[RMDB]
Description: The record gives the reactivity of an RNA of 177 nucleotides to DMS and 2A3. The RNA was probed in 150 mM KOAc, 10 mM MgCl2 and 150 mM bicine (pH 8.5) at 24 C.
RNA sequence: GGGAACGACUCGAGUAGAGUCGAAAACAUAUGACGGAGAGUGGAACACUCAGCGGAAACGCAUCCAAUGUCUGAAGUCUUUAAUGGGUAUAACAGUCAGUUGACCCAGAUCCCAACAGACUAUAAACGUUCUAUGAUGGUUCGCCAUCAUAGAACGAAAAGAAACAACAACAACAAC
Reactivity to DMS in 0.01 (KOAc 150mM, MgCl2 10mM, bicine 150mM(pH8.5), 24C), signal-to-noise 3, nucleotides 027 to 126: c100a060u000a070u000g000a070c070g000g010a100g040a040g010u000g020g010a110a140c070a070c030u000c030a130g010c030g000g010a050a130a100c040g020c000a300u000c050c040a130a110u000g000u000c000u000g010a190a120g010u000c020u000u020u000a220a190u000g000g010g010u000a010u000a000a000c010a200g010u030c250a100g000u000u000g000a040c000c000c000a000g000a110u000c000c000c000a070a160c060a020g000a010c010u010a100u000a060a040a150
Reactivity to 2A3 in 0.01 (KOAc 150mM, MgCl2 10mM, bicine 150mM(pH8.5), 24C), signal-to-noise 3, nucleotides 027 to 126: c010a030u170a080u240g060a000c040g020g010a020g000a000g040u060g000g200a160a030c040a000c040u020c010a020g010c000g030g000a030a030a000c010g010c010a010u000c010c010a080a080u120g010u020c000u000g070a050a020g000u000c000u020u050u040a080a030u030g020g020g060u020a170u060a300a030c010a000g290u210c040a030g010u160u000g010a000c000c000c010a000g010a020u000c000c000c010a000a020c010a010g030a000c030u050a040u140a220a120a010
The 2A3 profile rests on 2,665 reads. The DMS profile rests on 1,422 reads.